[RMDB]
RNA sequence: GGGAACGACUCGAGUAGAGUCGAAAAGCCUAUCUCAAAUGGGCGCGUGUUGAAGGUAAGGACGGAUUUGUCAGUGUAGAGCUACAACCUCCUUGCAAAUUCUUGAUUGCGGGACCAAAAGGACCUGGAUACGGUUACAGUUCGCUGUAACCGUAUCAAAAGAAACAACAACAACAAC
Reactivity to DMS in 0.01 (KOAc 150mM, MgCl2 10mM, bicine 150mM(pH8.5), 24C), signal-to-noise 2, nucleotides 027 to 126: g000c000c000u010a050u010c110u000c180a060a170a150u000g020g060g000c020g030c210g010u000g030u010u000g010a100a070g000g020u010a030a050g000g010a030c130g050g000a140u020u000u000g000u010c110a020g030u010g030u010a140g000a220g020c000u000a040c040a040a040c030c000u000c000c000u000u000g010c020a070a070a110u000u000c020u010u000g020a160u000u000g040c040g020g010g000a070c010c040a030a020a150a200g000g010a060c070c070u000g010
Reactivity to 2A3 in 0.01 (KOAc 150mM, MgCl2 10mM, bicine 150mM(pH8.5), 24C), signal-to-noise 1, nucleotides 027 to 126: g000c010c040u020a050u030c130u040c100a200a210a110u100g000g000g000c050g010c040g020u080g080u060u090g080a080a010g030g000u020a000a010g040g010a030c150g000g000a090u060u060u070g070u100c060a000g010u000g010u170a190g010a000g220c000u030a000c000a030a010c010c000u000c000c000u000u020g000c010a050a080a080u010u030c000u030u100g110a110u040u160g050c000g000g050g040a090c020c000a040a130a020a110g010g000a050c020c030u110g130
Conditions: 150 mM KOAc, 10 mM MgCl2 and 150 mM bicine (pH 8.5), 24 C. Chemical mapping of a 177-nucleotide RNA with DMS and 2A3. Values cover nucleotides 27 to 126. It was measured as part of the RMDB library 15KREP. 2A3 adducts were read by reverse transcription with SuperScript II with manganese. DMS adducts were read by reverse transcription with MarathonRT.